[RMDB]
RNA sequence: GGGAACGACUCGAGUAGAGUCGAAAAAUAAAGCAACGCGAGCAACCCGAGCAACGCGAGCAACGCGAGCAACGCGAGCAACGCGAGCAACGCGAGCAACGCGAGCAACGCGAGCAACGCGAAAAAAGCUAAUCACUUAGUUCGCUAAGUGAUUAGCAAAAGAAACAACAACAACAAC
Reactivity to 2A3 in 0.01 (KOAc 150mM, MgCl2 10mM, bicine 150mM(pH8.5), 24C), signal-to-noise 2, nucleotides 027 to 126: a010u070a030a130a000g010c020a060a140c070g010c000g090a020g000c020a040a060c050c010c010g040a010g010c010a020a220c000g010c010g060a020g000c010a080a160c000g000c000g020a060g030c000a080a200c020g000c010g050a040g020c070a100a190c010g010c010g030a070g050c070a120a090c020g020c020g040a020g010c020a120a260c010g000c010g030a000g000c040a070a170c000g000c000g030a000g010c010a090a170c010g000c010g090a140a020a000a000a000a000
Reactivity to DMS in 0.01 (KOAc 150mM, MgCl2 10mM, bicine 150mM(pH8.5), 24C), signal-to-noise 1, nucleotides 027 to 126: a090u020a170a040a120g000c020a140a060c050g020c000g000a300g020c010a110a120c050c000c000g080a200g050c020a120a060c040g060c020g020a160g000c010a060a060c000g020c000g000a290g030c000a090a170c000g000c000g040a210g020c070a080a060c000g020c000g000a190g020c200a110a090c030g020c030g000a110g050c060a060a080c000g000c000g010a180g010c000a080a070c050g030c000g020a210g070c020a240a000c020g020c000g000a000a000a100a180a140a030